[RMDB]
RNA sequence: GGGAACGACUCGAGUAGAGUCGAAAAUAUGGCAUUAAGGAUGCUUCUUUGCAUAUCCAAACUGCGCAAAAUGCAGAAUUUACACUUGAUGGUAUUAAGAUGUUUAGAUCAAGUAAUACUGUUACCGAGUGAUAUUAUCAUUCGUGAUAAUAUCACUAAAAGAAACAACAACAACAAC
Reactivity to 2A3 in 0.01 (KOAc 150mM, MgCl2 10mM, bicine 150mM(pH8.5), 24C), signal-to-noise 9, nucleotides 027 to 126: u190a090u060g040g010c020a020u060u050a110a070g040g010a020u030g020c000u160u080c050u170u180u120g010c020a020u040a050u120c010c000a050a060a030c030u020g000c080g010c080a040a040a040a070u140g000c010a000g050a090a070u080u090u090a090c110a010c040u010u020g020a020u040g030g120u120a080u130u130a170a110g110a210u180g170u160u130u190a070g020a060u010c000a040a010g010u000a020a030u090a070c020u010g030u070u050a040c020c040g040
Reactivity to DMS in 0.01 (KOAc 150mM, MgCl2 10mM, bicine 150mM(pH8.5), 24C), signal-to-noise 7, nucleotides 027 to 126: u020a120u010g000g010c010a020u010u010a060a180g000g000a060u000g000c020u010u050c170u020u030u010g010c020a040u030a060u020c020c030a040a130a140c200u000g010c030g010c070a050a040a110a070u030g000c000a030g000a150a060u010u010u030a120c130a060c060u010u010g000a030u000g010g020u020a100u010u020a050a080g000a090u020g010u000u010u020a060g000a020u000c020a040a020g000u000a030a050u020a050c030u000g000u000u010a090c070c060g010